[RMDB]
Structure probing data (2A3 and DMS) for a 155-nucleotide construct. 2A3 adducts were read by reverse transcription with SuperScript II with manganese.
RNA sequence: GGGAACGACUCGAGUAGAGUCGAAAAUGGCCGGCAUGGUCCCAGCCUCCUCGCUGGCGCCGGCUGGGCAACAUUCCGAGGGGACCGUCCCCUCGGUAAUGGUGAAUGGGACCCAAAAGCGCCUUUCGAGGCGCUAAAAGAAACAACAACAACAAC
Reactivity to 2A3 in 0.01 (KOAc 150mM, MgCl2 10mM, bicine 150mM(pH8.5), 24C), signal-to-noise 3, nucleotides 027 to 135: u020g030g000c000c000g000g000c010a030u040g000g000u000c000c000c000a000g000c000c000u030c010c010u060c080g080c120u120g000g000c000g000c000c000g000g000c000u000g000g010g010c010a010a010c000a010u000u000c000c000g000a000g000g010g000g010a030c030c020g190u280c000c000c000c000u000c000g000g000u000a000a000u000g000g000u000g000a000a000u000g000g000g000a000c000c000c000a010a000a000a000g000c010g000c000c000u000u010u040c090g070a000g000g000c010g000c000u020a010
Reactivity to DMS in 0.01 (KOAc 150mM, MgCl2 10mM, bicine 150mM(pH8.5), 24C), signal-to-noise 3, nucleotides 027 to 135: u010g000g020c000c010g010g010c000a160u020g000g000u000c020c000c010a010g010c000c000u000c040c010u010c130g010c110u010g000g010c040g000c000c000g000g010c000u000g000g000g010c040a060a070c000a010u000u000c010c000g020a000g000g000g000g010a300c230c300g000u020c000c000c000c010u000c000g000g000u030a000a000u000g000g010u000g000a030a020u000g000g000g000a050c000c000c300a040a000a080a040g000c000g000c000c000u000u000u020c080g010a000g000g000c000g010c000u010a000